An RNA of 207 nucleotides, treated with DMS and 2A3 and read out base by base. It was measured as part of the RMDB library M2RFPK. The RNA was probed in 150 mM KOAc, 10 mM MgCl2 and 150 mM bicine (pH 8.5) at 24 C. High DMS reactivity at an A or C suggests that its Watson-Crick edge is free. The 2A3 profile rests on 1,551 reads.
RNA sequence: GGGAACGACUCGAGUAGAGUCGAAAAGCCCAGAAGCCUCCCCUCAAAAUCGUUUCUGUCCAAAAUUGAUUCGGCGGCCCUGUCAUGAGGCCGAAACGAAGGCACGUACCCCUUCGAAUGGCGUCGGAACUUUCAGUCGUAUUCGUACGACUGAAAAGUUGCAUCUGAUAUUCGUAUCAGAUGCAACAAAAGAAACAACAACAACAAC
Reactivity to DMS in 0.01 (KOAc 150mM, MgCl2 10mM, bicine 150mM(pH8.5), 24C), signal-to-noise 2, nucleotides 027 to 156: g010c010c000c000a200g020a100a100g020c000c000u010c000c020c010c010u000c070a070a070a090a090u000c070g000u010u000u000c010u000g020u000c090c070a030a080a080a170u000u010g010a120u000u000c060g030g010c030g040g030c020c020c030u000g050u000c150a080u000g010a030g010g000c020c000g020a030a040a060c030g010a020a060g030g000c020a070c080g010u000a130c030c040c020c000u010u000c030g010a080a130u000g020g010c040g010u000c020g020g010a060a090c090u000u000u000c000a020g000u000c000g020u000a040u000u000c250g020u020a010c000g010a030c000u000g000a010a010a010a130
Reactivity to 2A3 in 0.01 (KOAc 150mM, MgCl2 10mM, bicine 150mM(pH8.5), 24C), signal-to-noise 2, nucleotides 027 to 156: g070c040c010c010a040g220a130a050g100c010c030u060c060c030c020c000u000c010a090a090a020a010u100c010g000u010u030u010c030u040g100u050c020c040a050a070a140a210u120u130g040a050u100u040c010g020g010c020g010g030c040c000c020u050g000u050c030a050u040g020a020g020g000c000c010g020a020a000a000c000g010a000a000g000g030c070a020c200g080u140a090c020c000c000c030u010u000c010g010a010a030u040g010g000c010g010u040c030g010g070a050a100c010u020u040u000c000a010g000u000c000g010u000a000u000u030c060g020u050a000c000g000a000c000u000g000a000a000a000a000